RNA sequence: GGGAACGACUCGAGUAGAGUCGAAAAGUUGGAGACGUCAAGGCCACUGGUAUUAUCGGUAACAUUUACGUUGUAGGUACAGAUAAAAUCUUUAACGGCCUGCAGAUCAUAACAAGCUCCGGUGUGUGAUAAUUGGGUUGCCUGUAAUAGAUAAUAGAUUGACAGUUGAUUUCGAUCAACUGUCAAUAAAAGAAACAACAACAACAAC
Reactivity to DMS in 0.01 (KOAc 150mM, MgCl2 10mM, bicine 150mM(pH8.5), 24C), signal-to-noise 2, nucleotides 027 to 156: g000u000u000g030g020a130g020a150c070g020u010c050a080a060g030g010c010c020a110c060u000g000g000u000a110u000u000a020u010c020g030g020u010a050a060c030a180u000u030u000a110c150g030u010u000g010u000a060g000g010u000a060c020a030g010a080u000a050a040a060a260u000c040u000u010u000a050a080c060g030g030c020c000u010g000c040a090g000a080u000c010a110u000a110a080c050a020a080g000c000u000c040c030g020g050u000g040u000g010u000g000a050u000a060a130u000u010g020g010g020u000u000g010c000c050u000g000u000a030a110u010a090g010a100u000a060a130u010a070g000
Reactivity to 2A3 in 0.01 (KOAc 150mM, MgCl2 10mM, bicine 150mM(pH8.5), 24C), signal-to-noise 2, nucleotides 027 to 156: g060u100u060g000g020a090g000a060c030g030u030c050a030a020g050g000c020c000a030c040u040g070g000u040a030u100u000a050u030c020g030g010u070a090a070c020a040u100u120u240a110c110g080u050u060g040u120a010g080g000u080a060c000a000g010a020u120a020a110a020a080u050c000u030u150u060a050a050c050g000g000c020c000u020g010c050a010g010a040u030c010a040u030a170a030c010a090a010g030c070u050c060c030g010g020u050g000u030g000u010g030a060u010a170a060u080u030g050g000g010u000u030g020c030c020u020g010u000a000a200u050a130g040a020u120a130a010u020a200g120
Structure probing data (DMS and 2A3) for a 207-nucleotide construct. DMS adducts were read by reverse transcription with MarathonRT. Reactivities are given for positions 27 through 156. For 2A3, 964 sequencing reads were counted. For 2A3 the reverse transcriptase was SuperScript II with manganese. The DMS profile rests on 4,799 reads.